[RMDB]
RNA sequence: GGGAACGACUCGAGUAGAGUCGAAAAGCCGACGGAGACCGAUGCGGCCGGGAUCACGGUGACCGGUACCUUCCGCGCGUUCGACCGGGAGGAGCGGGCGCACGGCGACAAACUGCAGGCGAUGCUACUGCUAUCGACUGUUCGCAGUCGAUAGCAGAAAAGAAACAACAACAACAAC
Reactivity to 2A3 in 0.01 (KOAc 150mM, MgCl2 10mM, bicine 150mM(pH8.5), 24C), signal-to-noise 1, nucleotides 027 to 126: g000c000c000g080a090c060g030g040a040g000a160c100c010g070a140u070g040c040g120g010c050c010g010g090g040a140u030c040a000c140g000g080u040g060a070c010c000g000g130u190a240c010c000u030u010c040c010g040c020g020c040g110u070u110c050g100a160c000c010g000g000g040a040g020g050a070g050c020g010g010g000c010g020c010a000c030g030g000c120g000a020c030a000a160a020c020u070g010c060a060g010g000c050g010a010u040g010c020u060a140
Reactivity to DMS in 0.01 (KOAc 150mM, MgCl2 10mM, bicine 150mM(pH8.5), 24C), signal-to-noise 1, nucleotides 027 to 126: g020c020c000g000a250c090g020g000a040g020a100c080c050g000a090u020g030c020g030g000c040c020g030g000g040a100u010c060a050c030g010g000u000g000a190c010c000g000g000u000a090c030c030u000u000c010c000g020c160g020c070g000u000u000c090g010a080c030c040g010g010g000a080g100g030a140g000c010g020g000g010c010g000c020a050c010g020g020c090g020a100c070a090a050a020c130u020g000c030a100g000g000c080g020a070u020g000c100u000a190